About this RNA:
Conditions: 150 mM KOAc, 10 mM MgCl2 and 150 mM bicine (pH 8.5), 24 C. This 177-nucleotide RNA was probed chemically with DMS and 2A3. The DMS profile rests on 1,068 reads. The 2A3 profile rests on 1,376 reads. Source: RMDB library VIROID, as collected in RNAgym.

[RMDB]
RNA sequence: GGGAACGACUCGAGUAGAGUCGAAAAGCCAUGGGUCUGGUCUUUAAAUUCGGAGGAAUCGUCCUUUAAACGUUCCUCCAAGAGACCAUUCCCCAAACCCUUACUUAUGUAAGAAUGGUUCGGCGAAGCAGUGCCUAUAGUUCGCUAUAGGCACUGCAAAAGAAACAACAACAACAAC
Reactivity to DMS in 0.01 (KOAc 150mM, MgCl2 10mM, bicine 150mM(pH8.5), 24C), signal-to-noise 2, nucleotides 027 to 126: g010c000c010a140u010g010g000g020u000c020u000g000g000u000c000u000u000u010a300a000a160u010u000c070g000g000a020g000g020a020a000u000c020g020u010c080c120u030u020u020a080a200a080c010g000u010u000c000c000u010c030c000a010a000g000a010g000a010c010c000a040u000u000c020c010c000c300a120a080a060c100c020c000u000u000a000c010u000u030a120u010g020u000a020a000g000a050a120u000g010g000u000u000c130g000g000c060g010a120a060
Reactivity to 2A3 in 0.01 (KOAc 150mM, MgCl2 10mM, bicine 150mM(pH8.5), 24C), signal-to-noise 2, nucleotides 027 to 126: g030c000c010a050u060g000g000g000u000c000u000g000g000u000c000u000u020u080a100a150a120u150u100c300g010g000a010g000g060a010a040u290c030g040u040c020c000u230u170u230a160a170a000c010g000u000u020c010c000u020c000c000a000a010g000a000g000a000c000c000a000u000u000c000c000c000c000a020a060a010c000c010c000u050u000a030c030u190u300a080u300g030u010a030a020g020a210a150u200g040g000u090u090c100g030g020c020g030a120a030